This 207-nucleotide RNA was probed chemically with 2A3. The reactions ran in a buffer of 150 mM KOAc, 10 mM MgCl2 and 150 mM bicine (pH 8.5), at 24 C.

RNA sequence: GGGAACGACUCGAGUAGAGUCGAAAAGUCUUCUAGAGAGCUUGGCCGUCGGGCCUUACACCCCGACUUGCUGAGUUUCUCUAGGAGAGUCCCUUUCCCAGCCAGAGGUGGCUGGUCAAACAAUACCAAAACUCUUGCUAGUUCGCUAGCAAGAGAACUCUCAUCUCAUGUUCGCAUGAGAUGAGAGAAAAGAAACAACAACAACAAC
Reactivity to 2A3 in 0.01 (KOAc 150mM, MgCl2 10mM, bicine 150mM(pH8.5), 24C), signal-to-noise 1, nucleotides 027 to 156: g040u000c000u000u000c000u000a000g000a000g000a000g000c010u000u000g010g010c010c000g000u010c010g000g040g030c040c030u030u080a080c080a030c010c000c000c040g000a000c040u120u300g020c020u000g030a030g010u020u270u020c000u000c000u000a000g000g010a000g000a000g000u000c000c000c000u030u120u060c000c000c020a000g000c000c000a000g000a040g050g020u000g000g000c000u070g040g000u150c030a030a020a000c050a070a040u000a010c000c000a000a030a140a170c000u000c000u000u000g000c000u000a000g000u040u010c200g000c140u000a000g000c000a000a000g000a000g000a010a000
2A3 adducts were read by reverse transcription with SuperScript II with manganese. It was measured as part of the RMDB library M2RFPK. Reactivities are given for positions 27 through 156.